[RMDB]
RNA sequence: GGGAACGACUCGAGUAGAGUCGAAAAGAUAUGGAAAACUGUGUUGUCAGGAAUCCUGUCGGAAACGACAGAUUCCUUGGAUUUACACAGCACUUCCUAAGUCAAAAGUCAGUGUUCGCACUGACAAGAAGUAUUUCAUGUUCGCAUGAAAUACUUCAAAAGAAACAACAACAACAAC
Reactivity to DMS in 0.01 (KOAc 150mM, MgCl2 10mM, bicine 150mM(pH8.5), 24C), signal-to-noise 6, nucleotides 027 to 126: g010a040u000a300u000g000g000a010a020a090a230c000u000g010u000g010u000u000g010u010c020a020g000g000a020a000u010c180c070u000g000u000c000g000g000a100a060a170c010g010a010c000a020g000a050u000u000c000c000u000u020g010g000a020u000u010u000a010c000a000c010a000g010c070a090c200u000u000c000c000u010a070a170g000u000c040a080a070a080a130g000u000c000a010g010u000g000u000u010c230g020c020a020c000u000g000a010c000a050a050
Reactivity to 2A3 in 0.01 (KOAc 150mM, MgCl2 10mM, bicine 150mM(pH8.5), 24C), signal-to-noise 4, nucleotides 027 to 126: g010a020u090a050u130g010g000a000a000a030a080c010u000g000u000g000u020u020g030u030c020a010g000g020a000a000u060c080c060u030g000u010c010g000g000a080a060a030c010g000a000c000a000g010a000u000u000c000c000u000u090g030g000a020u220u130u160a000c000a000c000a000g000c010a050c040u010u000c000c000u040a120a030g070u040c050a110a100a040a020g010u010c000a000g010u010g090u090u180c220g060c070a000c010u010g000a010c000a000a020